[RMDB]
RNA sequence: GGGAACGACUCGAGUAGAGUCGAAAAGAUCUGCGCCGAUCCGAAACGCUAGCAAACAGCCCGCAUCAUGUCGUCUCCUAACUUCGACGUGGUGAAAUACUGAGCUUAUGCGAGCAAGCCUGUUAGCAAUAGAUCAGAACGUUCGCGUUCUGAUCAACAUAAGAUUCCAGUUCGCUGGAAUCUUAUGAAAAGAAACAACAACAACAAC
Reactivity to DMS in 0.01 (KOAc 150mM, MgCl2 10mM, bicine 150mM(pH8.5), 24C), signal-to-noise 3, nucleotides 027 to 156: g010a060u000c020u000g020c070g040c070c050g000a090u010c040c020g020a130a090a110c120g020c010u000a040g030c010a040a050a210c210a110g010c010c010c020g030c010a030u000c030a040u000g000u000c000g050u000c070u000c130c090u000a120a090c110u010u000c010g010a050c000g060u000g000g050u000g000a050a080a160u000a140c030u010g000a080g010c000u010u000a300u000g000c020g010a020g040c000a120a170g040c040c020u000g050u010u000a070g020c040a100a110u010a110g000a040u000c000a000g000a010a020c010g030u000u010c280g000c070g010u000u000c010u000g010a000u000c010a030a110
Reactivity to 2A3 in 0.01 (KOAc 150mM, MgCl2 10mM, bicine 150mM(pH8.5), 24C), signal-to-noise 8, nucleotides 027 to 156: g020a030u020c030u080g030c050g030c060c040g030a040u030c030c020g050a050a060a030c060g000c020u030a010g010c020a020a050a090c030a070g010c020c010c010g010c010a010u010c000a000u020g010u000c010g020u000c060u080c100c080u150a160a180c080u070u030c020g010a000c000g010u000g000g000u020g010a050a030a010u210a040c060u040g000a010g020c000u050u050a020u120g020c010g000a010g010c010a040a020g010c000c010u100g040u150u130a040g030c020a070a120u060a210g010a000u000c000a000g000a000a000c010g020u080u080c230g010c000g090u000u000c020u000g000a000u000c000a000a000
Structure probing data (DMS and 2A3) for a 207-nucleotide construct. Reactivities are given for positions 27 through 156. For DMS the reverse transcriptase was MarathonRT. The DMS profile rests on 7,458 reads. Conditions: 150 mM KOAc, 10 mM MgCl2 and 150 mM bicine (pH 8.5), 24 C.